The data come from the RNA Mapping Database (RMDB), library OK3TST. This 207-nucleotide RNA was probed chemically with DMS and 2A3. For DMS, 10,537 sequencing reads were counted. The 2A3 profile rests on 2,004 reads. Reactivities are given for positions 27 through 156. DMS adducts were read by reverse transcription with MarathonRT.
RNA sequence: GGGAACGACUCGAGUAGAGUCGAAAAGUAACUCCGUAGUUACCGUUGAUAUCGGCUGAUGGCUUGUACUUUAACUUGUAAGGAACACCGUUUGCUGUAGCAGAUACUUCACGUGUUACUUCUGCAAAGUAUGCUUCAUCGGUUGAAAGUGCAAGCGUGGAGAGUUUAUAUUCGUAUAAACUCUCCAAAAAGAAACAACAACAACAAC
Reactivity to DMS in 0.01 (KOAc 150mM, MgCl2 10mM, bicine 150mM(pH8.5), 24C), signal-to-noise 3, nucleotides 027 to 156: g000u000a040a030c010u010c060c220g020u000a110g020u000u000a020c010c020g010u010u000g020a140u000a060u000c050g020g010c030u000g010a120u000g000g020c020u010u000g000u000a040c020u000u000u000a070a070c030u010u010g050u000a090a080g020g010a040a060c030a020c020c070g010u000u000u000g010c030u010g000u000a050g020c050a120g020a110u000a020c040u010u000c140a120c170g050u010g020u000u000a020c030u000u000c030u000g010c050a030a050a080g010u000a030u000g000c030u000u010c020a090u000c080g000g000u010u000g010a020a050a070g020u000g020c000a030a040g000c040g060
Reactivity to 2A3 in 0.01 (KOAc 150mM, MgCl2 10mM, bicine 150mM(pH8.5), 24C), signal-to-noise 3, nucleotides 027 to 156: g030u020a030a030c050u050c070c090g120u120a040g040u060u050a030c030c020g010u030u100g090a070u050a090u230c060g040g020c070u100g060a110u080g100g000c020u000u020g020u020a000c000u020u010u030a080a010c010u120u130g070u200a070a060g070g040a020a020c010a020c040c080g100u030u070u060g000c040u030g010u060a020g000c050a060g010a090u050a090c050u090u150c090a040c130g020u030g030u070u050a010c020u030u040c010u030g010c030a010a000a020g050u090a060u120g020c020u020u010c020a060u040c020g000g050u020u050g140a030a020a010g000u000g000c030a020a010g000c010g030